RNA sequence: GGGAACGACUCGAGUAGAGUCGAAAAAUAGGUUGGAUUGUUGAUUCAUUCCCUGUCUCAGAAUCGAUUUGUACAAGUUCUAAAAACGUAUUAAGUAAUCUUUGCUCAUUAAUCAUAAUGGAACCCCGAUUAAGUACUGAUUCGUCAGUACUUAAUCAAAAGAAACAACAACAACAAC
Reactivity to 2A3 in 0.01 (KOAc 150mM, MgCl2 10mM, bicine 150mM(pH8.5), 24C), signal-to-noise 3, nucleotides 027 to 126: a000u160a030g080g000u030u020g030g060a080u040u030g040u030u020g040a060u000u080c010a000u060u070c010c000c000u010g070u000c030u020c050a020g090a060a060u110c040g050a050u010u030u140g030u040a040c030a130a100g040u020u060c050u150a070a090a070a120a020c030g040u060a070u170u110a120a040g050u000a040a090u040c000u030u100u060g010c040u010c040a020u020u090a140a110u040c070a060u080a220a030u060g060g000a060a070c030c010c020c010
Reactivity to DMS in 0.01 (KOAc 150mM, MgCl2 10mM, bicine 150mM(pH8.5), 24C), signal-to-noise 7, nucleotides 027 to 126: a100u010a080g010g010u000u000g010g010a140u000u000g010u000u000g000a080u000u000c030a130u010u000c020c020c010u010g010u000c030u000c070a070g010a080a050u000c060g010a090u000u000u010g020u010a060c110a080a090g010u000u000c060u010a040a060a070a070a060c120g010u010a040u000u000a040a090g000u010a060a060u010c040u000u000u000g010c060u000c030a040u000u000a030a070u010c100a070u010a050a070u010g000g010a070a110c040c010c030c150